[RMDB]
RNA sequence: GGGAACGACUCGAGUAGAGUCGAAAACUAGCUGUUCGCAGCUAGAAAAAAACCUUUGUGCUUUUGACGAGCGAGUGUGGUGGGAGCCCAUUGGGCUCCGUAACAUCCACACACGCUCGAUAAGCACUCUGGUAAAAAACGCAGGUUCGCCUGCGAAGAUAUCUAGGAAGUUCGCUUCCUAGAUAUCAAAAGAAACAACAACAACAAC
Reactivity to 2A3 in 0.01 (KOAc 150mM, MgCl2 10mM, bicine 150mM(pH8.5), 24C), signal-to-noise 5, nucleotides 027 to 156: c000u000a000g000c000u010g050u110u080c250g010c130a000g000c010u010a000g030a120a040a010a000a000a010a010c010c010u010u010u010g010u000g010c010u110u070u130u170g210a120c020g000a000g010c010g020a090g020u000g000u000g030g000u010g000g000g010a000g000c010c000c080a180u160u300g030g010g000c000u010c000c000g000u000a020a000c020a210u090c010c000a000c000a000c000a000c000g000c000u000c000g000a000u000a000a000g000c000a010c000u000c000u010g000g010u050a120a070a020a070a000a010c010g000c000a000g020g030u050u110c180g110c060c000u000g000c000g000a020a000
Reactivity to DMS in 0.01 (KOAc 150mM, MgCl2 10mM, bicine 150mM(pH8.5), 24C), signal-to-noise 1, nucleotides 027 to 156: c000u000a020g030c000u000g010u000u000c240g090c000a050g010c030u020a040g000a000a000a110a130a130a100a020c000c000u000u000u000g030u000g000c000u000u000u000u010g000a220c030g000a010g030c040g040a060g030u000g010u000g000g020u000g000g040g010a040g020c020c020c000a270u000u010g070g060g020c000u000c000c000g020u000a030a050c070a140u000c010c000a020c000a000c020a030c020g030c000u010c020g020a030u000a000a040g010c010a010c000u030c010u000g000g000u010a000a050a050a040a090a090c010g000c000a010g020g030u000u010c300g050c020c000u020g010c000g020a050a140
Structure probing data (2A3 and DMS) for a 207-nucleotide construct. For DMS, 3,669 sequencing reads were counted. Values are in units of 0.01, from 0 to 300, in steps of 10.